Chemical mapping of a 207-nucleotide RNA with 2A3 and DMS.
Conditions: 150 mM KOAc, 10 mM MgCl2 and 150 mM bicine (pH 8.5), 24 C.
Source: RMDB library M2RFPK, as collected in RNAgym.
For 2A3 the reverse transcriptase was SuperScript II with manganese.
RNA sequence: GGGAACGACUCGAGUAGAGUCGAAAAGAAAGAAAGAAAGCGGUUGGGUGGGUCCAUCGACCGUCGUGGCGUAUUCGGACGCUUUACCACGACGCGAGGAAAUAGCGAGACCGACCAGCCCCUUUAACAGAGGUAUAGUAGUUCGCUACUAUACCAACCCCACUAUAAUCUUCGGAUUAUAGUGGGGAAAAGAAACAACAACAACAAC
Reactivity to 2A3 in 0.01 (KOAc 150mM, MgCl2 10mM, bicine 150mM(pH8.5), 24C), signal-to-noise 2, nucleotides 027 to 156: g040a000a030a010g070a080a080a000g050a040a020a000g030c080g030g040u060u060g090g080g120u070g120g030g010u100c030c010a080u030c010g030a050c090c000g000u000c000g000u000g010g010c000g010u060a120u140u180c100g110g030a010c040g030c050u060u110u100a030c020c000a000c000g000a000c000g000c030g000a020g050g090a080a100a120u070a080g070c060g030a100g000a090c010c020g030a000c000c000a000g000c000c000c000c010u020u040u020a080a040c070a070g060a050g100g010u010a000u000a000g000u010a000g000u050u010c110g020c120u000a000c000u000a000u000a000c010c000a000a000
Reactivity to DMS in 0.01 (KOAc 150mM, MgCl2 10mM, bicine 150mM(pH8.5), 24C), signal-to-noise 1, nucleotides 027 to 156: g000a230a090a100g000a300a140a180g000a140a140a060g030c180g010g050u000u000g010g010g000u010g040g000g010u010c020c030a020u100c040g000a090c180c010g010u030c020g000u000g040g030c010g000u020a030u000u010c120g010g000a160c090g020c180u020u000u000a040c000c010a030c010g030a020c000g040c040g060a210g030g000a020a040a130u010a140g000c000g030a190g010a060c030c000g010a050c030c000a080g000c000c000c010c070u000u030u000a050a120c060a130g010a150g020g050u000a010u000a000g020u000a010g010u010u010c300g020c030u000a040c000u000a000u000a000c000c030a010a000